[RMDB]
RNA sequence: GGGAACGACUCGAGUAGAGUCGAAAACGCUGGGAGAUUCGCCAAUACUUUCAUCGAUCUAUAGGGUUUGUCCUGAAGCGCGCACGGGAUGAUCCUAUAGGGAGAAAGUAAAAAUGAAUCUCCUGUGCUGAAGCGCGCACGGCAACCGAAAGGUGCGGUACUAUCUGCACUUCGGUGCAGAUAGUACAAAAGAAACAACAACAACAAC
Reactivity to 2A3 in 0.01 (KOAc 150mM, MgCl2 10mM, bicine 150mM(pH8.5), 24C), signal-to-noise 2, nucleotides 027 to 156: c020g000c010u040g000g000g000a010g050a020u000u000c000g000c020c010a010a040u010a020c030u050u010u030c130a280u300c040g040a020u010c010u010a000u010a020g060g010g030u040u100u300g090u120c000c000u030g030a250a090g010c000g000c000g000c010a020c010g000g020g000a020u040g010a010u040c000c000u000a000u000a010g010g000g000a050g010a000a000a000g000u010a000a010a000a020a020u050g000a000a000u010c000u000c000c000u000g010u000g000c010u040g030a100a040g000c000g000c000g000c010a010c020g000g000c020a010a020c000c000g090a080a030a050g020g020u050g030c050g020
Conditions: 150 mM KOAc, 10 mM MgCl2 and 150 mM bicine (pH 8.5), 24 C. This 207-nucleotide RNA was probed chemically with 2A3.